[RMDB]
RNA sequence: GGGAACGACUCGAGUAGAGUCGAAAACGGAGUCACUGCGUACGUUCUGAAGAACGGGCCAGGGAGUGUACGGCAGGGGCGAGGCUAAGGAGUGAAACUCCGAAGCCGGAGGGAAACCGACAGCCCGUCGAACGGUAAAUUUCGAUUUACCGUUCGAAAAAGAAACAACAACAACAAC
Reactivity to 2A3 in 0.01 (KOAc 150mM, MgCl2 10mM, bicine 150mM(pH8.5), 24C), signal-to-noise 6, nucleotides 027 to 126: c020g030g010a020g030u020c010a000c040u010g000c020g020u030a010c000g010u030u000c020u080g210a160a100g040a100a040c020g040g020g000c040c030a060g040g010g010a040g020u050g010u030a040c050g050g010c030a010g010g000g000g010c020g020a060g000g000c010u050a070a010g010g010a010g000u160g130a160a100a120c000u000c000c010g000a010a000g000c000c010g000g010a020g000g030g020a110a040a010c010c020g030a040c030a020g010c010c000c010g000
Reactivity to DMS in 0.01 (KOAc 150mM, MgCl2 10mM, bicine 150mM(pH8.5), 24C), signal-to-noise 9, nucleotides 027 to 126: c060g010g000a120g020u010c010a070c020u000g000c030g020u000a020c030g000u000u000c010u020g020a170a160g010a060a060c040g000g000g010c030c040a110g010g000g010a040g020u010g020u020a040c020g010g010c040a040g000g000g010g010c010g000a180g000g010c000u010a050a300g010g010a010g020u020g010a140a110a300c000u000c000c000g000a200a050g010c010c000g000g010a170g000g000g000a070a070a120c020c020g000a140c190a100g000c000c010c020g020